[RMDB]
RNA sequence: GGGAACGACUCGAGUAGAGUCGAAAAUUACUAUUAAUAGUGUGGUCCAAAAGGAUGGUGUUGAAAACACUCCUCCUCACUAUUUUACUCUUGGAUGCAAAAUUUUAACGCUCACCCCACGCAACAAUACCAUUCAAGUUCGCUUGAAUGAAAAGAAACAACAACAACAAC
Reactivity to DMS in 0.01 (KOAc 150mM, MgCl2 10mM, bicine 150mM(pH8.5), 24C), signal-to-noise 9, nucleotides 027 to 129: u050u060a100c090u040a040u080u030a010a000u000a050g000u020g000u030g030g020u100c120c100a080a070a160a000g030g010a000u050g030g030u000g020u000u000g050a140a060a090a090c040a050c020u000c040c010u000c020c010u030c030a000c020u000a020u010u010u010u020a120c120u000c080u040u040g010g020a080u000g000c070a040a050a080a140u010u020u010u010a120a130c130g000c040u000c000a110c040c020c010c020a050c140g030c060a090a060c090a080a050u000a070c180
Reactivity to 2A3 in 0.01 (KOAc 150mM, MgCl2 10mM, bicine 150mM(pH8.5), 24C), signal-to-noise 9, nucleotides 027 to 129: u100u040a050c060u050a030u250u070a020a010u010a010g010u000g010u020g030g040u110c130c050a070a050a030a030g020g010a040u190g070g140u020g040u030u090g170a100a080a020a000c010a010c010u030c000c000u020c000c000u000c000a000c000u000a020u010u050u030u060a080c040u070c010u080u080g090g030a050u090g050c040a030a060a100a130u090u130u090u130a120a050c070g010c030u010c030a050c000c000c000c000a030c040g070c010a010a050c010a060a040u080a090c040

Source: RMDB library 15KLIB, as collected in RNAgym. Chemical mapping of a 170-nucleotide RNA with DMS and 2A3. The DMS profile rests on 46,621 reads. 2A3 adducts were read by reverse transcription with SuperScript II with manganese. Reactivities are given for positions 27 through 129. For 2A3, 58,926 sequencing reads were counted.